[RMDB]
The data come from the RNA Mapping Database (RMDB), library OK1LIB. Structure probing data (2A3 and DMS) for a 177-nucleotide construct.
RNA sequence: GGGAACGACUCGAGUAGAGUCGAAAAUGCAAUUUAAUGUUAAUACCGUCGCUAUGUUAGCUAUUGAAAAUAUUGCGGGGAGGGGAAGUAACCGACAUGGAUGUAAAUCAUGAAAGAGCGGCUGUGGUCCAAUCCGUACGUUCGCGUACGGAUUGGAAAAAGAAACAACAACAACAAC
Reactivity to 2A3 in 0.01 (KOAc 150mM, MgCl2 10mM, bicine 150mM(pH8.5), 24C), signal-to-noise 2, nucleotides 027 to 126: u120g010c050a120a020u020u120u120a280a150u160g010u150u080a060a000u080a110c000c080g000u110c000g000c040u060a010u130g000u010u040a000g060c040u010a030u040u160g080a020a010a010a150u200a090u040u030g040c000g000g040g100g000a050g040g010g030g030a000a040g040u110a000a060c020c060g030a000c060a120u090g030g000a000u060g010u190a000a100a090u200c010a000u010g080a180a000a150g080a020g030c010g040g000c000u020g060u110g030g010
Reactivity to DMS in 0.01 (KOAc 150mM, MgCl2 10mM, bicine 150mM(pH8.5), 24C), signal-to-noise 2, nucleotides 027 to 126: u020g010c090a030a040u010u060u000a000a030u000g010u000u010a010a070u000a040c080c040g040u050c030g000c000u000a190u010g000u000u000a090g000c000u050a140u020u000g030a070a100a050a060u010a070u000u000g000c010g010g040g000g020a030g010g000g000g030a030a010g000u020a000a080c050c110g000a090c110a050u000g050g110a030u000g000u030a070a100a020u020c050a080u000g000a080a030a200g010a060g020c080g020g020c060u000g030u030g050g010
Overview: The reactions ran in a buffer of 150 mM KOAc, 10 mM MgCl2 and 150 mM bicine (pH 8.5), at 24 C.